Notes: Conditions: 150 mM KOAc, 10 mM MgCl2 and 150 mM bicine (pH 8.5), 24 C. This 177-nucleotide RNA was probed chemically with DMS and 2A3. DMS adducts were read by reverse transcription with MarathonRT. It was measured as part of the RMDB library M2PK90. Reactivities are given for positions 27 through 126.

RNA sequence: GGGAACGACUCGAGUAGAGUCGAAAAUUACUAGUCUGUGAUGAAUAGCUUUGACUUCUGACACCUCGUAUGAAAACUGCACGUGCAGUCUGAUUAUUUAGCAAGACUGAGGCUUAAAAUAAAUCAAUCUGUUUAUGUAGUUCGCUACAUAAACAGAAAAAGAAACAACAACAACAAC
Reactivity to DMS in 0.01 (KOAc 150mM, MgCl2 10mM, bicine 150mM(pH8.5), 24C), signal-to-noise 3, nucleotides 027 to 126: u010u000a080c050u010a040g000u000c030u010g030u010g020a070u000g000a060a050u010a070g000c070u000u000u010g020a110c050u000u000c040u010g000a100c080a080c040c060u000c070g020u000a020u000g000a110a070a100a060c050u000g000c020a160c270g000u000g000c010a020g000u000c020u000g010a070u000u000a060u000u010u000a040g010c040a080a040g010a070c050u010g010a040g000g000c060u010u010a040a030a070a100u000a030a050a090u000c120a080a150
Reactivity to 2A3 in 0.01 (KOAc 150mM, MgCl2 10mM, bicine 150mM(pH8.5), 24C), signal-to-noise 2, nucleotides 027 to 126: u070u030a030c030u020a030g040u000c010u030g110u040g040a060u030g000a080a070u040a070g030c060u150u080u140g070a050c000u010u010c020u080g060a020c000a060c030c010u020c090g040u080a040u150g070a030a060a030a050c030u010g000c060a060c110g080u200g000c030a000g030u000c010u000g010a010u000u070a050u060u060u100a020g010c020a060a050g010a020c030u080g020a030g070g000c010u050u040a010a100a020a050u190a070a080a050u070c010a000a050